[RMDB]
RNA sequence: GGGAACGACUCGAGUAGAGUCGAAAAGAUAUGGAUACCGAACUACAGGUGGGAGCAACAGCUCGGAAACGAGACAUGCUCGAUUCACCUGCGGUAUCCUAAGUCAAAACAGUGGUUCGCCACUGAAGUAAUCUUACAUCUUCGGAUGUAAGAUUACAAAAGAAACAACAACAACAAC
Reactivity to DMS in 0.01 (KOAc 150mM, MgCl2 10mM, bicine 150mM(pH8.5), 24C), signal-to-noise 7, nucleotides 027 to 126: g020a050u010a300u000g000g000a020u000a010c000c000g000a120a060c120u010a300c040a010g010g020u000g010g010g000a010g010c010a020a080c270a150g000c000u000c000g000g000a040a090a180c010g000a010g010a050c120a220u000g000c000u000c000g010a150u010u000c000a010c000c000u000g000c000g000g010u000a010u000c000c000u000a010a060g010u000c040a070a120a090a170c020a000g020u000g000g000u000u010c200g020c000c000a020c000u000g010a050a090
Reactivity to 2A3 in 0.01 (KOAc 150mM, MgCl2 10mM, bicine 150mM(pH8.5), 24C), signal-to-noise 8, nucleotides 027 to 126: g020a020u060a020u120g010g000a010u010a000c020c000g030a110a090c100u180a060c300a010g020g010u040g040g160g010a000g000c010a020a130c050a140g050c010u010c000g010g010a080a060a010c010g000a000g020a040c030a100u080g000c000u000c020g050a090u200u240c020a010c000c000u010g010c010g000g000u000a000u020c000c000u000a010a010g030u000c010a000a010a120a160c010a010g000u010g050g050u070u120c260g060c070c010a000c000u010g020a050a000

An RNA of 177 nucleotides, treated with DMS and 2A3 and read out base by base. 2A3 adducts were read by reverse transcription with SuperScript II with manganese. Conditions: 150 mM KOAc, 10 mM MgCl2 and 150 mM bicine (pH 8.5), 24 C. The 2A3 profile rests on 22,644 reads. It was measured as part of the RMDB library TTRDEL.